[RMDB]
RNA sequence: GGGAACGACUCGAGUAGAGUCGAAAAGAUAUGGAUCGGGUAUUGCUGAUGACCUAGCUCGGAAACGAGCUAGCAAGGCAAUACCACGAUCCUAAGUCAAAAGAUCAACGUGUUCGCACGUUGAUCACCAUAUAACCUACUUCGGUAGGUUAUAUGGAAAAGAAACAACAACAACAAC
Reactivity to 2A3 in 0.01 (KOAc 150mM, MgCl2 10mM, bicine 150mM(pH8.5), 24C), signal-to-noise 9, nucleotides 027 to 126: g030a020u080a030u200g000g000a000u010c010g010g010g010u010a010u010u000g000c020u030g040a300u130g020a100c010c010u000a000g000c000u000c010g020g020a060a130a090c010g010a010g000c000u000a000g000c010a080a150g010g000c000a010a000u000a010c000c000a010c000g000a000u000c000c000u010a030a010g040u010c040a060a020a050a170g010a000u000c000a000a010c010g000u020g080u140u160c300g040c150a000c000g000u000u000g000a000u000c000a000
Reactivity to DMS in 0.01 (KOAc 150mM, MgCl2 10mM, bicine 150mM(pH8.5), 24C), signal-to-noise 9, nucleotides 027 to 126: g010a050u010a300u010g000g000a010u000c000g010g000g010u000a000u000u000g010c000u000g010a090u020g000a100c300c000u000a000g010c000u000c000g000g000a110a130a220c010g010a010g010c000u000a000g000c030a050a100g000g010c010a010a000u000a000c000c000a030c000g010a000u000c000c000u000a010a110g010u000c050a100a080a140a130g000a010u000c000a000a010c000g020u000g010u000u010c280g020c010a010c010g010u000u000g000a000u010c000a040